[RMDB]
RNA sequence: GGGAACGACUCGAGUAGAGUCGAAAAAUCGAGGCUAGAGUCACGCUUGGGUAUCGGCUAUUGCCUGAGUGUGCUAGAGUCCUCGAAGAGUAACUGCUGACCUUAUUCACUGGCUGUGGGCCUUAUGACUAUUGUCUACAUUCGUGUAGACAAUAGUAAAAGAAACAACAACAACAAC
Reactivity to 2A3 in 0.01 (KOAc 150mM, MgCl2 10mM, bicine 150mM(pH8.5), 24C), signal-to-noise 9, nucleotides 027 to 126: a000u020c000g000a000g000g000c000u010a010g020a030g190u300c020a000c000g010c000u000u010g020g000g010u050a050u150c100g120g010c110u100a100u140u170g000c000c000u000g000a000g010u010g000u000g000c000u000a010g000a000g100u200c000c000u000c000g000a010a010g020a010g020u080a080a050c020u030g010c030u050g040a090c010c000u040u040a050u070u050c030a030c050u020g010g000c000u010g010u060g050g040g020c010c010u110u110a170u200g050
Reactivity to DMS in 0.01 (KOAc 150mM, MgCl2 10mM, bicine 150mM(pH8.5), 24C), signal-to-noise 9, nucleotides 027 to 126: a100u000c010g010a010g000g000c000u000a020g000a020g000u030c010a010c000g010c000u000u000g010g000g020u000a030u010c150g000g010c110u010a070u010u000g010c000c000u000g000a010g020u000g010u000g010c010u000a020g000a020g000u030c010c000u000c000g010a010a070g000a130g010u010a070a090c060u000g010c040u000g000a090c010c020u000u000a060u010u000c060a090c100u000g010g000c020u000g010u010g010g010g010c090c020u000u010a050u010g000
Conditions: 150 mM KOAc, 10 mM MgCl2 and 150 mM bicine (pH 8.5), 24 C. Chemical mapping of a 177-nucleotide RNA with 2A3 and DMS. For 2A3 the reverse transcriptase was SuperScript II with manganese. DMS adducts were read by reverse transcription with MarathonRT. In probing experiments dimethyl sulfate is read out at A N1 and C N3, which are open when not base-paired. Values cover nucleotides 27 to 126.